[RMDB]
RNA sequence: GGGAACGACUCGAGUAGAGUCGAAAACAGACAGGGCAGGUCCUCAGGAAAUGGCUGAGGAGGUAAUUUUACCACUUGGACCCACUUUUAGGACUUGCUGGAUUCUUCUCCGAAUGUCCUCAAGGUCUCCUACUCUCACAUUCGUGUGAGAGUAGGAAAAAGAAACAACAACAACAAC
Reactivity to DMS in 0.01 (KOAc 150mM, MgCl2 10mM, bicine 150mM(pH8.5), 24C), signal-to-noise 3, nucleotides 027 to 126: c190a090g040a090c130a140g000g000g020c010a030g020g020u000c010c000u000c300a060g020g010a030a080a080u000g010g000c010u000g000a020g020g010a070g000g000u030a010a160u010u010u000u000a020c020c000a130c010u000u010g000g000a110c150c010c170a060c140u000u000u010u010a020g010g000a020c000u000u000g010c010u000g020g000a060u000u000c070u000u000c050u000c030c020g010a110a120u000g000u010c010c010u000c130a110a090g020g000u010c080
Reactivity to 2A3 in 0.01 (KOAc 150mM, MgCl2 10mM, bicine 150mM(pH8.5), 24C), signal-to-noise 1, nucleotides 027 to 126: c030a010g090a040c010a050g000g040g110c000a000g030g000u000c000c020u020c060a020g000g070a090a070a050u090g010g040c010u030g000a010g010g080a130g000g030u000a010a110u040u240u220u080a020c010c010a000c020u010u040g060g040a190c000c020c020a020c020u030u010u010u090a000g000g000a010c000u020u000g030c030u040g010g000a000u060u060c000u060u050c050u080c010c010g080a130a060u080g030u030c020c000u020c040a030a060g030g010u000c000